The record gives the reactivity of an RNA of 207 nucleotides to DMS and 2A3. DMS adducts were read by reverse transcription with MarathonRT. Conditions: 150 mM KOAc, 10 mM MgCl2 and 150 mM bicine (pH 8.5), 24 C. The data come from the RNA Mapping Database (RMDB), library OK3TST.

[RMDB]
RNA sequence: GGGAACGACUCGAGUAGAGUCGAAAAUCGCCGAGGACACGCUCAAGAGUGCUGCGCAUCGGCCGGUGACGAAUGAUCACCCGCCGGAGAUGGUCACCUCCGAGAACUGGAAGAAGUUCGCCGUCGGCUCGACCAGCGACGAGAUCACGGGCGAGGGGAAACCUCGCCCAUUCGUGGGCGAGGUUUCAAAAGAAACAACAACAACAAC
Reactivity to DMS in 0.01 (KOAc 150mM, MgCl2 10mM, bicine 150mM(pH8.5), 24C), signal-to-noise 1, nucleotides 027 to 156: u000c000g030c010c050g010a100g000g000a170c010a170c020g010c020u020c110a100a090g020a120g010u000g000c080u010g010c180g140c050a070u000c000g020g020c000c030g020g080u000g030a020c030g000a110a150u000g000a230u000c030a070c090c000c080g030c000c000g000g010a030g060a030u000g000g000u000c090a180c080c000u000c000c050g010a070g020a100a060c020u020g060g000a080a200g010a220a300g020u000u000c020g000c000c020g000u020c020g010g130c000u010c020g020a160c000c070a120g000c000g020a080c090g000a090g020a220u020c030a090c150g050g010g050c010g000a070g000g000g070
Reactivity to 2A3 in 0.01 (KOAc 150mM, MgCl2 10mM, bicine 150mM(pH8.5), 24C), signal-to-noise 1, nucleotides 027 to 156: u010c020g050c010c030g100a150g030g020a090c030a050c100g030c030u060c010a080a080g070a040g100u120g000c020u020g010c050g020c060a080u040c000g040g000c000c000g000g000u000g000a000c000g040a040a030u080g040a160u070c000a010c010c000c000g000c020c030g000g000a030g010a060u150g010g060u140c110a070c070c010u020c030c000g020a060g000a210a080c060u060g000g030a000a070g040a060a000g030u000u000c000g000c020c000g010u050c000g020g050c110u120c110g040a050c040c030a010g000c040g060a040c010g010a030g000a050u110c060a030c160g030g000g000c010g000a040g010g030g000